An RNA of 207 nucleotides, treated with DMS and 2A3 and read out base by base. The data come from the RNA Mapping Database (RMDB), library ARCHII. Conditions: 150 mM KOAc, 10 mM MgCl2 and 150 mM bicine (pH 8.5), 24 C. The 2A3 profile rests on 1,843 reads. Values cover nucleotides 27 to 156. For DMS, 1,670 sequencing reads were counted.
RNA sequence: GGGAACGACUCGAGUAGAGUCGAAAAAAAACGAGAUCGUGUGGACGCCGCCGCUUUAGGAUCGAAACACUAAAUUAAAUAAAGCUAGUUUAUUCAUUGCGUGUCUGUCCGCUGUGAAUAAGCGAAAUUAAAGACUAGACUAAACAUGUAGUACUGAUCCAAAUUAUGUCUUCGGACAUAAUUUGGAAAAAGAAACAACAACAACAAC
Reactivity to DMS in 0.01 (KOAc 150mM, MgCl2 10mM, bicine 150mM(pH8.5), 24C), signal-to-noise 1, nucleotides 027 to 156: a020a010a020a020c090g000a180g020a040u000c050g040u000g040u000g020g000a160c050g040c050c010g030c050c030g050c050u020u010u010a070g000g020a040u000c000g040a200a170a100c150a060c000u000a090a050a060u000u000a110a070a130u010a040a050a120g010c040u000a130g000u000u000u000a010u020u000c020a000u000u020g050c000g030u000g020u000c080u000g040u000c040c010g010c000u000g090u000g010a050a050u000a020a010g020c020g010a030a020a100u010u000a080a050a080g010a040c030u020a120g010a150c010u000a130a030a080c020a090u000g020u000a090g010u000a120c040u000g050a300
Reactivity to 2A3 in 0.01 (KOAc 150mM, MgCl2 10mM, bicine 150mM(pH8.5), 24C), signal-to-noise 3, nucleotides 027 to 156: a000a010a010a010c120g030a100g000a150u160c060g010u020g000u010g050g000a010c030g000c010c000g000c030c010g010c000u020u000u020a000g000g000a010u120c030g020a040a010a010c010a010c030u160a150a110a140u220u090a040a050a040u040a020a030a000g000c000u000a010g000u010u010u010a000u010u000c010a000u030u080g000c000g000u020g000u020c010u020g000u000c000c000g000c020u010g000u000g010a000a010u010a000a000g000c020g010a050a000a010u120u090a060a010a010g030a010c080u140a030g030a000c000u070a080a110a030c070a100u150g040u080a070g030u030a090c030u010g040a030